[RMDB]
RNA sequence: GGGAACGACUCGAGUAGAGUCGAAAACGGAGGAGCGCUUCAGGGAUCCCCGGGGAAACCUGGAGCGAACUGGCAAAAAAGGACGGUGGGGAGUGCCCAGCGGCCGACAGGAGUAAUUCCCGCCGAAGAGAUAGAUAUGGUUCGCCAUAUCUAUCUCAAAAGAAACAACAACAACAAC
Reactivity to DMS in 0.01 (KOAc 150mM, MgCl2 10mM, bicine 150mM(pH8.5), 24C), signal-to-noise 2, nucleotides 027 to 126: c040g000g000a190g030g010a150g050c070g010c040u000u000c000a010g000g000g000a300u010c010c020c080c260g000g010g000g000a020a050a300c010c000u000g010g000a000g020c000g000a020a000c020u000g010g000c090a030a000a030a060a100a130g000g000a080c060g010g000u010g010g020g010g010a090g000u010g000c000c010c030a050g000c060g000g010c040c020g010a080c140a070g000g000a090g000u000a060a080u000u000c020c000c000g030c080c060g000a110a100
Reactivity to 2A3 in 0.01 (KOAc 150mM, MgCl2 10mM, bicine 150mM(pH8.5), 24C), signal-to-noise 1, nucleotides 027 to 126: c050g010g030a060g000g040a080g070c000g030c000u010u020c020a000g000g030g000a010u030c030c040c040c030g240g080g010g000a040a000a010c020c000u000g000g000a000g010c000g000a010a000c000u000g000g000c030a120a060a000a000a000a200g060g030a030c040g040g050u000g000g020g000g010a180g090u090g050c020c020c000a020g060c060g040g000c050c040g000a020c040a040g050g030a050g040u020a030a060u040u000c010c000c000g000c000c020g010a080a030